[RMDB]
RNA sequence: GGGAACGACUCGAGUAGAGUCGAAAAUGCUCUGAGUAGUUAUAUGCUUGUCUCAAAGAUUAAGCCAUGCAUGUCUAAGUACACACGAAUUAAAAGUGAAACCGCAAAAGGCUCAUUAUAUCAGUUAUGAAUCAAGUUAGUUCGCUAACUUGAUUCAAAAAGAAACAACAACAACAAC
Reactivity to 2A3 in 0.01 (KOAc 150mM, MgCl2 10mM, bicine 150mM(pH8.5), 24C), signal-to-noise 3, nucleotides 027 to 126: u120g000c020u020c050u070g040a010g030u100a000g010u110u110a100u010a000u190g050c020u090u130g030u000c020u000c020a140a080a080g040a050u110u130a010a000g000c030c010a010u020g010c000a020u010g060u000c020u100a100a030g170u210a010c020a000c010a000c040g020a050a080u160u140a190a060a000a000g040u010g040a110a000a000c010c030g000c020a020a020a040a010g000g000c010u020c060a020u030u260a070u050a030u110c030a020g030u070u050a190
Reactivity to DMS in 0.01 (KOAc 150mM, MgCl2 10mM, bicine 150mM(pH8.5), 24C), signal-to-noise 5, nucleotides 027 to 126: u010g000c020u000c030u020g010a060g010u000a060g020u010u000a060u040a110u010g000c040u000u000g010u000c000u020c110a060a110a110g000a100u020u020a070a100g000c020c050a040u010g020c050a070u010g000u010c050u020a070a090g020u010a040c060a120c040a030c100g000a070a090u010u040a050a090a090a130g010u000g010a060a090a110c100c090g000c090a020a060a090a100g000g000c050u000c060a050u000u010a060u020a060u010c070a130g000u010u010a110

Structure probing data (2A3 and DMS) for a 177-nucleotide construct. It was measured as part of the RMDB libraries RFM100 and RFMREP. Reactivities are given for positions 27 through 126.